[RMDB]
RNA sequence: GGGAACGACUCGAGUAGAGUCGAAAAGUGAUACGGGCAGUCCCCAUCGAGACCGUGCAUGCACCACACGAGCAAAUAUCUGGCAAGGCCCAUUCUACAUCUUCAUUGAUAACCUGCCGUCGAUCAGGUGUGGGGAGGGGUUCGCCCCUCCCCACACAAAAGAAACAACAACAACAAC
Reactivity to 2A3 in 0.01 (KOAc 150mM, MgCl2 10mM, bicine 150mM(pH8.5), 24C), signal-to-noise 2, nucleotides 027 to 126: g260u130g070a100u090a170c050g000g020g000c040a010g070u050c000c000c080c000a070u030c040g160a150g050a080c050c050g000u020g000c060a050u120g120c020a020c000c000a000c000a000c070g090a060g000c020a030a110a000u180a040u100c050u020g020g000c030a160a160g040g030c000c000c000a020u090u070c070u090a090c020a090u000c030u070u010c040a080u010u290g000a020u040a010a050c000c030u020g010c060c000g150u110c040g000a080u120c010a010g040